[RMDB]
RNA sequence: GGGAACGACUCGAGUAGAGUCGAAAAGCCGGAGCCUUGCUCUGUAACCUUCGGGGGCUUUCACCAGCUGAACAGGGAGCUGUCUGGACCAGCAUAGGGUGCUUGCGGCGUUGACGUGGUGCUCUGCUUGGCUGUGUGUCGGAGGCCUCCGGGUGCCGAGGAUUGAUAUCUUCGGAUAUCAAUCCUCAAAAGAAACAACAACAACAAC
Reactivity to 2A3 in 0.01 (KOAc 150mM, MgCl2 10mM, bicine 150mM(pH8.5), 24C), signal-to-noise 2, nucleotides 027 to 156: g100c030c010g060g000a020g000c060c300u250u250g000c060u000c000u040g040u040a040a100c010c000u120u150c020g000g000g000g000g000c000u000u000u000c000a010c010c000a000g000c000u000g010a020a000c010a040g000g020g010a030g060c040u060g060u010c010u030g130g120a290c010c010a050g060c010a040u170a080g180g060g040u130g070c010u030u100g030c050g000g010c020g090u080u120g010a010c020g050u140g000g040u140g090c010u000c000u000g000c000u020u020g000g000c010u020g020u060g030u050g090u170c090g060g010a020g010g000c000c010u000c000c000g010g000g000u040g000c040c050